[RMDB]
RNA sequence: GGGAACGACUCGAGUAGAGUCGAAAAUUUGUGUGAAGCUAACAUCUCAAUUCUGCUGAAGAUAUUCUCGGUCAGUAGAGCAUAACUUCCAGCCGCUUGCAUGCAUUUGAUAUGAUGAUUUUACCAGACAUACAGGGCAAUUCGUUGCCCUGUAUGUAAAAGAAACAACAACAACAAC
Reactivity to 2A3 in 0.01 (KOAc 150mM, MgCl2 10mM, bicine 150mM(pH8.5), 24C), signal-to-noise 2, nucleotides 027 to 126: u060u030u040g060u010g000u010g050a020a010g010c030u040a100a050c020a120u030c060u040c060a040a170u180u040c000u060g000c020u030g020a030a010g030a040u050a070u080u080c030u010c020g100g070u130c050a090g060u090a020g090a000g030c000a020u050a090a050c000u050u020c050c010a010g040c020c010g050c060u030u060g120c000a000u040g010c020a060u000u040u170g070a050u050a120u220g110a050u010g050a040u020u000u090u060a080c040c000a030g040
Reactivity to DMS in 0.01 (KOAc 150mM, MgCl2 10mM, bicine 150mM(pH8.5), 24C), signal-to-noise 5, nucleotides 027 to 126: u000u020u000g010u010g030u010g010a080a060g030c040u000a070a130c100a070u010c070u000c070a070a140u020u000c060u000g010c020u000g010a060a050g010a110u000a080u000u010c030u000c020g010g020u000c100a090g000u000a070g020a040g010c130a040u000a040a050c070u000u000c080c070a070g000c040c170g020c070u010u010g030c090a060u000g000c030a070u000u010u000g010a070u000a040u010g000a080u000g010a080u000u000u000u000a110c040c040a100g010